The record gives the reactivity of an RNA of 207 nucleotides to 2A3 and DMS. The data come from the RNA Mapping Database (RMDB), library M2RFPK. The DMS profile rests on 5,774 reads. The reactions ran in a buffer of 150 mM KOAc, 10 mM MgCl2 and 150 mM bicine (pH 8.5), at 24 C.
[RMDB]
RNA sequence: GGGAACGACUCGAGUAGAGUCGAAAAGCAAGUCGCAUCGCAAAACCGCGGCAAGUGCAGUUAGCGAGAGGAGGCUGGGUUUUGGCUUCCUUAAGCAAUCGGUCACCGAGAAGGUGUGGUCGUUACCUAGACAGUUUUCUGUUCGCAGAAAACUGAAGACAUAAAAUACGUUCGCGUAUUUUAUGUCAAAAGAAACAACAACAACAAC
Reactivity to 2A3 in 0.01 (KOAc 150mM, MgCl2 10mM, bicine 150mM(pH8.5), 24C), signal-to-noise 9, nucleotides 027 to 156: g020c030a050a030g020u020c000g010c030a060u090c070g040c200a090a100a050a050c080c070g010c010g020g000c060a110a060g090u060g020c010a060g030u080u150a030g030c010g000a020g000a010g040g010a010g020g000c010u080g100g120g130u060u100u170u300g020g000c000u000u000c000c000u000u010a020a020g000c000a000a030u050c020g030g020u040c000a010c010c020g030a050g070a220a060g050g020u070g020u030g040g010u000c000g020u020u030a170c000c000u030a060g030a100c010a000g000u000u010u000u000c000u010g040u030u090c190g000c070a000g000a000a000a000a000c000u000g000a020a010
Reactivity to DMS in 0.01 (KOAc 150mM, MgCl2 10mM, bicine 150mM(pH8.5), 24C), signal-to-noise 3, nucleotides 027 to 156: g030c040a070a130g000u000c030g010c020a110u000c030g050c080a080a090a100a210c080c100g020c020g020g030c040a070a090g030u000g000c020a100g010u010u000a190g010c030g000a300g010a040g000g010a040g010g050c010u000g020g020g000u000u000u010u010g010g020c010u000u000c030c010u000u000a010a300g000c020a050a060u000c020g020g030u000c020a300c020c010g000a110g000a130a180g000g000u000g020u010g010g020u000c020g010u000u000a060c020c020u000a210g000a230c010a010g010u000u010u000u000c020u010g020u000u000c290g070c020a020g000a010a000a010a020c010u010g000a010a050